[RMDB]
RNA sequence: GGGAACGACUCGAGUAGAGUCGAAAAGCGUACUACCCUCGAAAGACGCUGUUCUGAUGACCAGUAUUCCCAAAUAGGAAUACUGCAAGGAACAGAACUACGUUGAGUAGAGGGUAUCGCAAACGAGAUGUAACAAGUUCGCUUGUUACAUCUCGAAGAAUGUUACGGUCUUCGGACCGUAACAUUCAAAAGAAACAACAACAACAAC
Reactivity to 2A3 in 0.01 (KOAc 150mM, MgCl2 10mM, bicine 150mM(pH8.5), 24C), signal-to-noise 5, nucleotides 027 to 156: g000c000g020u050a080c050u010a010c010c000c000u000c000g030a040a000a000g030a010c000g000c060u020g000u000u000c010u000g300a300u120g030a080c050c000a000g000u000a000u000u020c030c010c030a140a250a060u300a090g000g000a000a010u010a000c010u000g030c020a060a140g030g040a040a000c020a020g000a030a010c100u160a060c050g020u000u030g000a000g010u010a000g010a000g010g020g000u020a000u020c010g000c000a020a020a020c040g000a000g000a000u000g000u000a000a000c000a000a010g030u060u100c180g100c180u000u010g000u000u000a000c000a000u000c000u000c000g000a000a010
Reactivity to DMS in 0.01 (KOAc 150mM, MgCl2 10mM, bicine 150mM(pH8.5), 24C), signal-to-noise 2, nucleotides 027 to 156: g050c000g020u000a090c090u000a020c000c000c020u010c000g000a210a280a300g000a020c000g040c000u000g020u000u000c010u020g000a060u010g000a120c160c010a050g030u000a010u000u000c000c000c010a110a170a290u000a060g000g010a020a020u010a010c000u040g030c060a030a110g030g000a170a100c030a000g020a050a070c010u000a010c010g010u010u010g020a120g020u000a120g010a020g000g010g020u000a000u000c020g000c050a060a090a170c000g030a000g050a030u000g000u010a000a030c000a010a010g000u000u020c300g060c000u010u000g000u000u000a010c010a010u000c000u020c000g050a010a120